The record gives the reactivity of an RNA of 207 nucleotides to DMS and 2A3. Values are in units of 0.01, from 0 to 300, in steps of 10. The DMS profile rests on 3,675 reads. The reactions ran in a buffer of 150 mM KOAc, 10 mM MgCl2 and 150 mM bicine (pH 8.5), at 24 C. The data come from the RNA Mapping Database (RMDB), library OK3TST. The 2A3 profile rests on 1,571 reads.
[RMDB]
RNA sequence: GGGAACGACUCGAGUAGAGUCGAAAAUGUGUGUGUGUGUGUGUGUCUGUGUGUCUGUGUAUGUGUGUAUACUAUAUUUACUUUAUCCAUUCAUUCACUGAUGGAUACUUAGGCCAUUUAUUUAUCUUGACUGUUGUGAAUGAUGCUGCUAUGAACAACUCAGUCAGGUAUUCGUACCUGACUGAGUAAAAGAAACAACAACAACAAC
Reactivity to DMS in 0.01 (KOAc 150mM, MgCl2 10mM, bicine 150mM(pH8.5), 24C), signal-to-noise 1, nucleotides 027 to 156: u010g020u010g040u010g030u020g040u000g010u000g010u000g060u000g020u000g000u000c070u000g050u010g020u000g010u000c090u010g050u010g020u010a030u000g010u010g040u000g020u000a110u000a080c070u000a140u010a100u010u000u010a110c080u000u010u000a040u020c020c000a030u010u000c020a060u000u010c090a070c080u000g010a050u010g000g010a060u000a020c250u000u010a050g030g000c070c020a060u000u010u000a070u010u000u000a050u000c070u030u000g010a090c070u000g000u010u020g000u010g000a120a070u000g000a110u010g030c040u010g010c020u000a180u000g000a060a110c040a160
Reactivity to 2A3 in 0.01 (KOAc 150mM, MgCl2 10mM, bicine 150mM(pH8.5), 24C), signal-to-noise 3, nucleotides 027 to 156: u070g030u020g000u010g010u010g020u000g010u000g090u000g050u010g000u000g040u000c050u030g020u040g020u030g050u020c020u020g040u000g010u020a030u060g060u030g000u000g010u050a020u050a080c050u000a020u060a080u260u190u070a100c020u070u140u060a020u020c020c000a010u020u120c020a050u110u170c080a080c140u070g020a010u030g030g000a010u000a030c020u020u070a030g020g000c010c000a070u050u110u050a070u060u060u020a070u130c070u060u090g100a070c050u070g030u080u030g040u030g040a120a110u020g030a030u050g020c030u020g020c000u050a100u190g070a080a000c020a000